[RMDB]
RNA sequence: GGGAACGACUCGAGUAGAGUCGAAAAGAAAGAAAGAAAGAUAGGGAGCAUCAUUUUCAAAAUAAGUCAUGAAUUGAGUUCACUGAAAUCUCAAGGCAUGUCAAUUUUUAAAACAGUGAACCCAGAAUCACGCAGUAAUCUUCGGAUUACUGCGUGAAAAAGAAACAACAACAACAAC
Reactivity to 2A3 in 0.01 (KOAc 150mM, MgCl2 10mM, bicine 150mM(pH8.5), 24C), signal-to-noise 2, nucleotides 027 to 126: g080a000a040a000g080a000a110a000g080a020a100a000g080a030u110a130g000g010g000a030g080c010a050u070c020a030u020u120u010u000c000a000a000a020a020u070a160a090g060u030c000a000u000g100a080a070u040u000g000a030g020u020u020c050a080c190u120g050a170a110a130u120c000u000c000a000a020g000g090c020a000u000g000u010c050a040a020u020u000u030u080u190a000a030a000a000c040a010g010u030g060a020a040c020c020c030a030g090a040a030
Reactivity to DMS in 0.01 (KOAc 150mM, MgCl2 10mM, bicine 150mM(pH8.5), 24C), signal-to-noise 1, nucleotides 027 to 126: g010a060a120a000g020a060a040a030g000a150a070a030g030a160u030a090g010g000g000a070g000c030a070u010c070a060u020u000u040u000c140a070a030a130a090u000a060a180g030u000c000a010u000g030a060a000u000u000g000a000g010u000u000c030a020c080u010g000a000a100a030u000c030u000c000a000a030g000g010c000a000u000g000u000c060a050a020u000u020u010u000u050a040a000a040a080c030a050g000u000g040a050a130c000c000c010a130g000a150a150